[RMDB]
RNA sequence: GGGAACGACUCGAGUAGAGUCGAAAACAGUGACUGAUGUGGUUUUCAGUUUCUGUGGAGGAAGGGUUGCAACGCUUUUUCAAGAGAAUGACCGUGCGUCCGCUUAAACGAAGCGUCGAACGCCGGUAGUACCAGUCAGUUUCGACUGACUGGUACUAAAAGAAACAACAACAACAAC
Reactivity to 2A3 in 0.01 (KOAc 150mM, MgCl2 10mM, bicine 150mM(pH8.5), 24C), signal-to-noise 6, nucleotides 027 to 126: c000a010g020u010g030a010c010u010g000a020u030g040u160g160g180u170u060u060u070c010a010g000u000u010u000c010u020g020u050g030g030a040g000g030a050a050g080g000g000u030u110g040c080a080a050c010g050c020u060u040u050u080u130c100a080a010g020a010g070a180a120u120g030a030c010c010g030u140g040c000g000u010c000c000g000c000u040u040a130a130a030c150g080a040a000g000c010g040u110c120g050a050a010c000g000c000c000g000g000u000
Reactivity to DMS in 0.01 (KOAc 150mM, MgCl2 10mM, bicine 150mM(pH8.5), 24C), signal-to-noise 4, nucleotides 027 to 126: c010a040g040u010g000a010c020u000g010a030u010g020u010g030g000u010u010u010u000c000a010g000u010u000u000c000u000g000u000g000g010a150g000g000a070a040g000g000g030u000u000g010c080a100a120c130g010c020u000u000u000u000u030c070a050a110g020a110g000a080a100u020g020a050c010c000g000u020g020c030g020u000c010c010g000c000u020u000a030a070a170c300g010a050a010g000c000g010u010c160g000a100a070c010g030c010c000g000g010u010
Source: RMDB libraries RFM100 and RFMREP, as collected in RNAgym.
Structure probing data (2A3 and DMS) for a 177-nucleotide construct.
The RNA was probed in 150 mM KOAc, 10 mM MgCl2 and 150 mM bicine (pH 8.5) at 24 C.